[RMDB]
RNA sequence: GGGAACGACUCGAGUAGAGUCGAAAAGCCACCUCCCGACACCAUUGUGUUAGGGAUUAAGUUUCCAAUACAUGCUUUUGGGAAGACACAUUCAAAUCAUAGAACAUGGCAUGCCACACAGGACCACAUAGGGAAGAACCAAUGUUGGUCAGAAGGAUCGAUUAGGUGGUUUCGACCACCUAAUCGAAAAAGAAACAACAACAACAAC
Reactivity to 2A3 in 0.01 (KOAc 150mM, MgCl2 10mM, bicine 150mM(pH8.5), 24C), signal-to-noise 1, nucleotides 027 to 156: g100c020c010a040c010c020u000c040c000c000g020a050c020a000c010c020a300u290u300g000u020g010u020u050a300g000g010g020a000u030u150a020a030g010u000u020u010c040c000a000a000u090a150c000a070u050g070c040u130u060u150u200g130g000g000a000a190g060a020c060a000c020a140u180u250c090a100a080a070u030c000a010u170a170g100a040a020c070a170u060g010g010c010a060u100g040c020c000a100c020a020c010a090g090g000a000c000c000a000c020a060u060a060g060g000g000a190a060g030a200a050c000c000a020a020u010g000u010u110g070g000u030c030a060g000a000a010g010g000a060
This 207-nucleotide RNA was probed chemically with 2A3.
The data come from the RNA Mapping Database (RMDB), library OK3TST.
For 2A3 the reverse transcriptase was SuperScript II with manganese.
The reactions ran in a buffer of 150 mM KOAc, 10 mM MgCl2 and 150 mM bicine (pH 8.5), at 24 C.
For 2A3, 443 sequencing reads were counted.